[RMDB]
RNA sequence: GGGAACGACUCGAGUAGAGUCGAAAAAGUCCAACCUAGUCCUGCUGGGCCUGAAUCCACAGGUUGAAAGUCUUGUGUCUCCAGAAGGCUCCACCAUGCCCAGUUCUCUUAGAUAUUGCUUAUACAUGUCAGCAUUGCUGUGGCGUGUCACCCGCCCGCUUACCCACCUAUUCGUAGGUGGGUAAGCAAAAGAAACAACAACAACAAC
Reactivity to 2A3 in 0.01 (KOAc 150mM, MgCl2 10mM, bicine 150mM(pH8.5), 24C), signal-to-noise 1, nucleotides 027 to 156: a020g050u010c060c000a040a010c090c020u070a020g000u070c000c040u030g090c030u030g040g020g010c020c060u040g060a030a090u080c080c000a060c020a030g050g000u030u070g040a030a010a010g030u000c030u090u120g050u020g040u060c030u010c080c020a040g060a120a030g120g000c010u010c020c000a020c030c000a040u070g010c000c000c000a010g000u110u060c000u000c000u040u010a040g010a060u030a070u090u060g010c060u060u020a030u090a150c060a020u240g060u080c010a030g000c020a100u080u170g040c040u080g030u110g000g000c000g010u030g050u020c000a030c020c000c020g010c020c010c000